[RMDB]
RNA sequence: GGGAACGACUCGAGUAGAGUCGAAAAUUUGUUUAAAAAACGAGCAGGGGCAACUGGACUGAAUGCAAUAGUGAUCAAUACUUCAACUGUCGGCGGGACAUCUCCCCCAAGUGAAACGCCGAUCAAGUGUCCUGGUAUUGUUCGCAAUACCAGGACAAAAAGAAACAACAACAACAAC
Reactivity to DMS in 0.01 (KOAc 150mM, MgCl2 10mM, bicine 150mM(pH8.5), 24C), signal-to-noise 1, nucleotides 027 to 126: u000u010u050g000u030u020u050a000a040a110a070a130a060c030g000a100g000c150a090g000g000g000g040c000a060a040c100u020g030g000a000c010u000g000a060a130u010g000c060a060a090u000a020g000u010g030a000u040c020a130a050u010a090c180u000u020c200a030a020c170u040g010u000c000g010g030c010g020g010g000a300c010a000u020c060u000c020c000c020c000c030a140a210g030u000g000a000a220a160c040g000c000c000g040a020u030c160a040a020g000
Reactivity to 2A3 in 0.01 (KOAc 150mM, MgCl2 10mM, bicine 150mM(pH8.5), 24C), signal-to-noise 1, nucleotides 027 to 126: u020u000u050g060u040u070u040a030a050a020a000a000a000c000g040a010g000c020a010g010g010g000g000c000a100a020c000u030g000g120a020c020u070g020a050a020u000g020c000a010a010u030a060g050u050g000a080u030c040a110a190u020a130c030u130u210c030a100a030c030u000g000u050c000g000g000c030g000g000g000a050c000a030u080c150u170c010c000c000c000c000a020a040g010u000g020a000a010a000c000g010c000c020g000a000u010c010a000a120g040

The data come from the RNA Mapping Database (RMDB), library RFM100. This 177-nucleotide RNA was probed chemically with DMS and 2A3. The RNA was probed in 150 mM KOAc, 10 mM MgCl2 and 150 mM bicine (pH 8.5) at 24 C. For DMS the reverse transcriptase was MarathonRT. For 2A3 the reverse transcriptase was SuperScript II with manganese. Values cover nucleotides 27 to 126.